[RMDB]
RNA sequence: GGGAACGACUCGAGUAGAGUCGAAAAGCUCUAUCCUUCGGGAUAGAGCAAACGCUACGAUUGACGGUGAAGCCGGACCUGAGGUUCAGCAUAGUCGGGCAAAAAGUCACAUGUUCGCAUGUGACAACCUACUGUUUUAGUUCGCUAAAACAGUAGGAAAAGAAACAACAACAACAAC
Reactivity to 2A3 in 0.01 (KOAc 150mM, MgCl2 10mM, bicine 150mM(pH8.5), 24C), signal-to-noise 7, nucleotides 027 to 126: g000c000u000c010u000a010u010c000c010u020u080c220g100g000g000a000u000a000g000a000g000c000a000a000a000c040g000c040u210a070c040g100a110u040u100g070a040c030g030g080u050g100a100a010g060c020c010g030g040a070c010c040u150g150a100g070g020u050u020c010a000g000c000a010u020a020g030u020c020g000g050g000c020a040a040a020a040a040g000u000c000a000c000a000u010g040u040u060c240g020c100a000u000g000u000g000a000c000a000a010
Reactivity to DMS in 0.01 (KOAc 150mM, MgCl2 10mM, bicine 150mM(pH8.5), 24C), signal-to-noise 7, nucleotides 027 to 126: g000c000u000c000u000a000u010c000c000u000u020c180g040g010g010a010u000a000g000a010g000c000a000a030a070c130g010c060u000a080c100g020a100u010u000g010a110c060g010g000u000g010a140a200g000c010c020g010g000a030c030c030u000g010a120g040g020u010u000c020a040g010c040a060u000a240g010u000c010g010g000g020c050a050a040a080a080a090g000u000c000a010c000a010u000g010u000u010c200g020c000a010u000g010u000g000a000c000a030a060